Description:
An RNA of 177 nucleotides, treated with 2A3 and DMS and read out base by base. The DMS profile rests on 2,889 reads. 2A3 adducts were read by reverse transcription with SuperScript II with manganese. The data come from the RNA Mapping Database (RMDB), library OK2TST. The RNA was probed in 150 mM KOAc, 10 mM MgCl2 and 150 mM bicine (pH 8.5) at 24 C.

[RMDB]
RNA sequence: GGGAACGACUCGAGUAGAGUCGAAAAGCGAGUACCGAAGAGGAUGCCACACGCGUGCCGAUAUCAAGAGGUAAGGCAAUAAUUGUACCGGCGAUGGGGCUACGGAUUGGGUUAGGCGCAUAGGUCACAUACCGGACCAUUUCGAUGGUCCGGUAUGAAAAGAAACAACAACAACAAC
Reactivity to 2A3 in 0.01 (KOAc 150mM, MgCl2 10mM, bicine 150mM(pH8.5), 24C), signal-to-noise 3, nucleotides 027 to 126: g030c010g020a060g020u040a060c040c020g030a090a020g020a050g080g020a070u130g020c020c030a070c000a000c030g010c010g020u070g010c000c020g090a110u040a040u150c060a130a070g070a040g160g030u070a020a060g020g020c040a020a070u180a090a050u090u120g030u070a030c020c010g060g000c020g070a110u040g010g000g020g000c000u030a040c050g040g040a060u080u070g070g030g000u020u070a070g000g000c020g020c070a010u100a070g050g020u040c020a030
Reactivity to DMS in 0.01 (KOAc 150mM, MgCl2 10mM, bicine 150mM(pH8.5), 24C), signal-to-noise 3, nucleotides 027 to 126: g000c080g040a090g030u000a080c030c020g010a060a060g010a190g000g000a100u000g010c040c030a050c060a060c150g020c080g020u000g000c030c010g000a150u010a040u000c070a110a120g000a120g020g000u000a070a100g000g010c060a090a100u020a060a080u020u000g020u000a040c070c040g020g020c030g000a100u010g010g010g010g020c040u020a160c050g000g010a140u000u000g000g000g000u010u010a090g010g020c020g000c090a060u010a070g010g000u000c030a100